An RNA of 177 nucleotides, treated with DMS and 2A3 and read out base by base.
The 2A3 profile rests on 3,284 reads.
It was measured as part of the RMDB library OK2TST.
The reactions ran in a buffer of 150 mM KOAc, 10 mM MgCl2 and 150 mM bicine (pH 8.5), at 24 C.
2A3 adducts were read by reverse transcription with SuperScript II with manganese.
The DMS profile rests on 3,730 reads.
[RMDB]
RNA sequence: GGGAACGACUCGAGUAGAGUCGAAAAGGUGGAGCGGCAGCAACAUGAGGCACGCUUACUUCAGCGGCAGGUGGUGCAUGCGCCUCAGCACGCGGUGCUGACUGGCCACUGCGGUGCCGUGCGCUUGCGCAGGACCCGUAUUCGUACGGGUCCUGCGAAAAGAAACAACAACAACAAC
Reactivity to DMS in 0.01 (KOAc 150mM, MgCl2 10mM, bicine 150mM(pH8.5), 24C), signal-to-noise 3, nucleotides 027 to 126: g000g000u010g010g010a090g020c040g010g020c020a040g000c040a060a070c140a090u000g010a120g000g020c020a060c030g010c030u000u000a080c040u000u010c070a080g010c070g000g000c020a090g010g030u000g000g020u000g020c090a060u000g000c060g010c020c050u010c060a030g020c020a010c000g030c140g030g010u000g000c010u000g000a050c090u010g010g000c070c030a030c060u000g000c040g010g000u000g020c190c030g030u000g010c030g000c030u010u000g020
Reactivity to 2A3 in 0.01 (KOAc 150mM, MgCl2 10mM, bicine 150mM(pH8.5), 24C), signal-to-noise 3, nucleotides 027 to 126: g050g020u060g000g060a030g030c050g060g020c060a010g010c020a030a100c020a200u220g040a110g110g000c030a020c190g020c010u030u060a030c010u100u140c060a020g000c000g040g000c000a020g000g060u040g030g130u040g050c020a030u090g050c030g040c010c020u040c010a000g000c030a000c010g280c110g120g020u020g000c000u020g110a130c070u110g010g040c010c020a000c010u010g000c000g070g150u040g000c000c000g020u040g020c010g010c000u040u130g040